Annotation:
Chemical mapping of a 177-nucleotide RNA with 2A3 and DMS. Conditions: 150 mM KOAc, 10 mM MgCl2 and 150 mM bicine (pH 8.5), 24 C. Values cover nucleotides 27 to 126. For 2A3 the reverse transcriptase was SuperScript II with manganese. For 2A3, 6,213 sequencing reads were counted. For DMS, 11,918 sequencing reads were counted.
RNA sequence: GGGAACGACUCGAGUAGAGUCGAAAAGUAGAGGAAAGUUCUAUAUAACACAACAUUUGUAAUUGUGUUAUCUGAUAACAAUUAUGGUGAUUGUGUAUUCUCCUCAUAUUGUUUAUUCAAGUAGAAAGAUCAUAUCAGUGUUCGCACUGAUGUGAUCAAAAGAAACAACAACAACAAC
Reactivity to 2A3 in 0.01 (KOAc 150mM, MgCl2 10mM, bicine 150mM(pH8.5), 24C), signal-to-noise 4, nucleotides 027 to 126: g030u050a030g030a020g030g090a110a090a010g020u050u000c090u010a220u010a010u030a170a010c000a000c000a010a020c030a030u060u100u300g020u020a010a030u000u010g000u010g010u040u080a090u000c070u080g070a040u060a040a000c000a000a000u000u010a000u070g000g000u020g010a200u000u000g000u000g000u010a040u110u060c060u030c000c030u040c010a030u130a030u050u040g010u000u150u040a080u010u130c040a050a020g030u030a020g080a030a130a000
Reactivity to DMS in 0.01 (KOAc 150mM, MgCl2 10mM, bicine 150mM(pH8.5), 24C), signal-to-noise 5, nucleotides 027 to 126: g010u020a030g010a000g000g000a040a070a070g010u010u000c060u010a030u010a050u010a050a020c000a000c000a010a010c030a040u000u030u070g040u010a030a020u000u000g010u000g010u010u020a070u050c260u040g000a060u010a050a010c000a010a010u000u000a010u000g000g010u010g000a050u000u010g000u010g010u000a070u050u010c100u000c010c060u000c070a110u050a110u010u010g010u010u020u010a090u020u020c100a030a110g020u020a080g010a100a070a140